[RMDB]
RNA sequence: GGGAACGACUCGAGUAGAGUCGAAAAGAACAUGCGUUCGCGCAUGUUCAAAUAAAAUCAGCGGAAAUCGAGGCGUAAAUAUUACCGCUGAACGCCUCGAUAAAAGAGCUGGCUUCGGCCAGCUCAACCUAAACAAAUGGUUCGCCAUUUGUUUAGGAAAAGAAACAACAACAACAAC
Reactivity to DMS in 0.01 (KOAc 150mM, MgCl2 10mM, bicine 150mM(pH8.5), 24C), signal-to-noise 4, nucleotides 027 to 126: g000a010a000c000a000u000g000c000g030u000u010c260g050c010g020c000a010u010g000u010u000c000a050a080a080u000a040a050a100a100u010c080a070g010c070g000g010a100a100a030u000c020g000a020g000g010c000g020u000a050a100a070u000a080u010u010a210c050c020g030c060u000g000a080a040c000g000c000c000u000c000g010a010u000a030a060a100a130g000a020g030c010u000g010g010c010u000u010c200g020g000c000c000a000g000c000u000c000a020a050
Reactivity to 2A3 in 0.01 (KOAc 150mM, MgCl2 10mM, bicine 150mM(pH8.5), 24C), signal-to-noise 5, nucleotides 027 to 126: g010a000a000c000a000u010g010c010g030u040u070c220g010c010g000c100a000u000g000u000u000c000a000a000a000u030a000a020a000a060u120c060a030g050c020g100g050a050a150a080u020c020g000a000g010g000c010g010u020a000a160a030u240a090u160u160a080c030c020g010c050u020g040a000a000c000g000c000c000u010c000g000a000u020a010a090a010a020g000a000g000c000u000g010g000c000u020u040c200g100g000c010c000a000g000c000u000c010a000a000
The record gives the reactivity of an RNA of 177 nucleotides to DMS and 2A3. Source: RMDB library M2PK50, as collected in RNAgym. The RNA was probed in 150 mM KOAc, 10 mM MgCl2 and 150 mM bicine (pH 8.5) at 24 C. For 2A3, 10,789 sequencing reads were counted.